[RMDB]
RNA sequence: GGGAACGACUCGAGUAGAGUCGAAAACAGGACCGCGUCGGCAUCGAUCUCUCCGUUAUCGAAACUUUGACGCAUCAUGGAUAAGAUCUGAUCUCGUAUCUUCGUCUCGGUCUCGGUAAACAGAGUGUGCUUAAGGUGAGUUCGCUCACCUUAAGCAAAAAGAAACAACAACAACAAC
Reactivity to DMS in 0.01 (KOAc 150mM, MgCl2 10mM, bicine 150mM(pH8.5), 24C), signal-to-noise 3, nucleotides 027 to 126: c150a090g000g000a030c020c020g030c090g020u000c020g000g010c110a030u010c010g000a040u010c020u000c070u000c010c090g000u010u000a090u040c020g000a040a080a110c050u020u010u000g030a000c070g040c300a090u020c070a090u010g000g010a050u010a040a150g000a100u010c100u030g060a030u010c060u040c030g040u000a060u030c080u000u050c050g020u000c030u000c050g000g030u020c000u020c000g000g010u020a060a040a120c050a060g020a040g040u060g000
Reactivity to 2A3 in 0.01 (KOAc 150mM, MgCl2 10mM, bicine 150mM(pH8.5), 24C), signal-to-noise 4, nucleotides 027 to 126: c060a020g000g060a060c000c000g020c010g020u050c020g010g020c030a070u070c070g030a070u030c010u010c000u000c020c030g040u020u050a040u070c030g060a020a050a050c050u150u050u160g000a000c070g050c040a050u090c030a030u130g080g000a060u030a070a110g000a030u010c100u220g050a090u070c030u050c050g090u130a060u050c040u050u030c010g040u000c000u000c010g050g000u030c010u010c010g060g010u060a040a100a000c040a000g060a000g070u130g040

Structure probing data (DMS and 2A3) for a 177-nucleotide construct. The reactions ran in a buffer of 150 mM KOAc, 10 mM MgCl2 and 150 mM bicine (pH 8.5), at 24 C. The DMS profile rests on 3,294 reads. It was measured as part of the RMDB library OK1LIB. DMS adducts were read by reverse transcription with MarathonRT. For 2A3 the reverse transcriptase was SuperScript II with manganese.